[RMDB]
About this RNA
The record gives the reactivity of an RNA of 177 nucleotides to DMS and 2A3. 2A3 adducts were read by reverse transcription with SuperScript II with manganese.
RNA sequence: GGGAACGACUCGAGUAGAGUCGAAAAGUACUCGCAUUUGGCUGACCAUAUCUUCUACGCUUAACUGACUAUUACGACUAUCAUUCAUGCACAUUGCGCCAAUCAGUUGCGCAGUACGGCCAACACCGAAGCGUAAGGGGUUCGCCCCUUACGCUUCAAAAGAAACAACAACAACAAC
Reactivity to DMS in 0.01 (KOAc 150mM, MgCl2 10mM, bicine 150mM(pH8.5), 24C), signal-to-noise 1, nucleotides 027 to 126: g030u020a090c040u000c020g010c050a090u010u000u020g000g000c020u000g000a140c030c030a010u000a080u000c070u000u030c030u000a060c040g010c020u010u000a030a130c090u000g000a160c170u000a070u000u000a060c120g010a090c020u000a130u000c010a060u000u000c060a110u000g020c110a110c150a110u020u010g020c040g000c030c080a060a160u010c090a060g010u000u000g010c000g010c120a020g030u000a060c030g000g010c020c020a100a080c190a070c180c080
Reactivity to 2A3 in 0.01 (KOAc 150mM, MgCl2 10mM, bicine 150mM(pH8.5), 24C), signal-to-noise 2, nucleotides 027 to 126: g030u010a030c010u010c020g040c040a060u030u000u040g050g120c030u010g030a050c010c020a050u050a090u100c040u060u000c040u070a070c070g000c010u070u060a070a010c020u070g170a080c040u050a050u200u150a050c050g060a040c030u060a050u170c030a070u090u110c060a080u120g030c000a000c000a110u000u120g040c050g000c010c000a030a070u040c030a070g100u120u070g050c030g000c000a020g000u040a010c000g030g020c020c000a010a010c020a010c040c110